[RMDB]
Chemical mapping of a 177-nucleotide RNA with DMS and 2A3. For 2A3 the reverse transcriptase was SuperScript II with manganese. For DMS, 17,896 sequencing reads were counted. The data come from the RNA Mapping Database (RMDB), library TTRDES. For 2A3, 10,602 sequencing reads were counted. The RNA was probed in 150 mM KOAc, 10 mM MgCl2 and 150 mM bicine (pH 8.5) at 24 C. For DMS the reverse transcriptase was MarathonRT.
RNA sequence: GGGAACGACUCGAGUAGAGUCGAAAAGAUAUGGAGUAAUCACGGGACGUAAAGUCGGAAACGACUUUCGUCCCGUGAGUUACUCCUAAGUCAAAAGUGAUCUACGUUCUUCGGAACGUAGAUCACAUCUAAGUGGUAUGUUCGCAUACCACUUAGAAAAAGAAACAACAACAACAAC
Reactivity to DMS in 0.01 (KOAc 150mM, MgCl2 10mM, bicine 150mM(pH8.5), 24C), signal-to-noise 7, nucleotides 027 to 126: g010a040u000a300u010g000g000a020g010u000a010a030u000c000a010c000g000g000g010a020c010g010u020a000a010a010g010u000c000g020g000a060a110a240c000g010a020c000u000u000u000c010g010u000c000c000c000g000u000g000a010g010u000u000a010c000u000c000c000u000a010a080g000u000c040a110a090a140a160g010u000g000a010u000c000u000a010c010g010u000u000c000u000u020c270g020g000a010a010c000g010u000a000g000a000u000c000a000c000a030
Reactivity to 2A3 in 0.01 (KOAc 150mM, MgCl2 10mM, bicine 150mM(pH8.5), 24C), signal-to-noise 1, nucleotides 027 to 126: g030a000u060a050u170g000g010a000g010u010a000a020u050c000a000c000g000g000g030a000c040g210u300a020a030a010g000u000c020g010g020a000a090a000c020g000a000c000u000u000u000c000g000u000c000c000c000g010u000g010a000g000u000u010a010c000u000c000c000u000a000a010g010u000c000a020a000a060a170g010u020g000a010u000c000u010a010c000g010u000u010c020u050u090c300g040g010a000a000c030g000u000a000g000a000u000c000a000c000a000